[RMDB]
RNA sequence: GGGAACGACUCGAGUAGAGUCGAAAAAUCAGGUCAUUAUUCCGCUCAAGACAUCCACGCUGAAGCCGAGAAUUCAGGUACAAAAGGAUUUCGUGGAGGAGGACGAUCCCCUGCUGGUGGUGCAUCCACAAUACGGGUACUUCGGUACCCGUAUUGUAAAAGAAACAACAACAACAAC
Reactivity to 2A3 in 0.01 (KOAc 150mM, MgCl2 10mM, bicine 150mM(pH8.5), 24C), signal-to-noise 2, nucleotides 027 to 126: a010u050c030a050g000g090u020c040a060u010u200a040u080u000c020c020g040c040u090c060a050a070g010a040c010a040u000c010c030a030c060g090c030u060g010a050a030g070c070c050g130a070g030a130a020u070u030c050a020g100g010u140a080c080a040a110a020a020g050g030a040u070u070u130c050g000u050g020g000a030g030g010a020g040g000a010c050g010a050u030c000c000c030c010u080g080c030u020g000g060u020g020g000u020g000c000a030u030c040c020
Reactivity to DMS in 0.01 (KOAc 150mM, MgCl2 10mM, bicine 150mM(pH8.5), 24C), signal-to-noise 4, nucleotides 027 to 126: a100u000c080a070g010g010u000c030a040u010u000a180u010u000c030c040g020c100u000c080a110a070g010a070c050a090u010c030c020a060c100g000c060u000g020a070a050g030c040c080g000a120g000a050a080u000u000c040a040g010g010u000a090c200a070a050a110a090g000g000a050u000u000u010c040g020u000g010g010a040g000g020a060g010g010a090c160g000a070u000c010c020c020c040u010g000c060u000g000g030u000g000g020u000g010c070a070u000c050c080